[RMDB]
RNA sequence: GGGAACGACUCGAGUAGAGUCGAAAAUCAAUGACUCAUUCAAGAGGAACCUAAGCAGCAAUGUGGUUCAGUGGUCCCUUUGGGUCUCCUGUUUAGCACAAGAGCUAGCUAGUGCUCUGAAGCAGCACACUUAUCAUGGCUUCGGCCAUGAUAAGUGAAAAGAAACAACAACAACAAC
Reactivity to DMS in 0.01 (KOAc 150mM, MgCl2 10mM, bicine 150mM(pH8.5), 24C), signal-to-noise 4, nucleotides 027 to 126: u000c120a120a120u000g000a100c030u000c060a100u000u000c060a120a090g010a090g010g010a090a160c090c020u010a070a080g030c020a030g020c100a130a110u000g020u000g000g000u010u000c040a040g000u000g020g010u000c000c000c010u000u000u000g020g010g000u000c030u000c140c010u010g000u010u000u000a110g010c010a030c050a050a050g000a250g030c000u000a030g040c030u000a060g010u000g000c030u000c020u000g010a070a080g010c200a020g000c060a160
Reactivity to 2A3 in 0.01 (KOAc 150mM, MgCl2 10mM, bicine 150mM(pH8.5), 24C), signal-to-noise 3, nucleotides 027 to 126: u060c020a000a120u140g070a090c020u020c040a110u170u040c100a150a000g040a030g000g030a000a030c010c010u030a110a010g010c000a010g000c000a060a120u050g030u030g050g200u040u040c020a000g030u050g090g030u040c020c000c000u030u050u100g050g000g000u010c010u050c000c000u020g060u120u150u170a090g030c000a010c020a080a000g050a020g180c000u040a090g020c010u030a020g060u040g100c000u000c020u040g010a050a000g040c030a000g030c010a020